[RMDB]
RNA sequence: GGGAACGACUCGAGUAGAGUCGAAAAUUGCAAGGCGUUACAAAGAGACAAGAGAUUUAAUUCAAAGUUUUUCGUGGACUCUCAAACGCUUACAGGGGAGUUUUGCUUGUGCUCUCAUGCACCAAGACGUAGGGUCGUAGUUCGCUACGACCCUACGAAAAGAAACAACAACAACAAC
Reactivity to 2A3 in 0.01 (KOAc 150mM, MgCl2 10mM, bicine 150mM(pH8.5), 24C), signal-to-noise 2, nucleotides 027 to 126: u080u130g020c030a020a010g000g040c020g020u030u100a070c090a050a190a000g020a000g000a000c010a070a000g050a000g020a070u000u240u300a160a180u160u230c060a030a060a260g040u060u000u000u040u050c050g010u080g000g130a230c040u000c000u050c030a130a040a010c010g050c000u010u040a000c030a020g000g010g030g050a000g030u000u050u030u040g130c190u020u080g000u050g030c000u000c000u000c000a010u060g000c010a000c090c040a050a000g050a040
Reactivity to DMS in 0.01 (KOAc 150mM, MgCl2 10mM, bicine 150mM(pH8.5), 24C), signal-to-noise 1, nucleotides 027 to 126: u120u020g000c060a070a090g000g030c000g020u000u000a040c280a160a130a020g000a050g000a060c000a000a030g000a000g000a000u080u000u000a030a070u060u040c220a110a170a070g000u000u000u000u020u000c000g000u060g000g000a120c000u000c000u000c070a000a000a000c020g000c000u020u000a010c300a230g000g000g020g000a040g000u030u060u030u000g050c240u000u040g000u000g040c050u000c030u000c020a020u000g020c040a160c080c030a090a000g000a200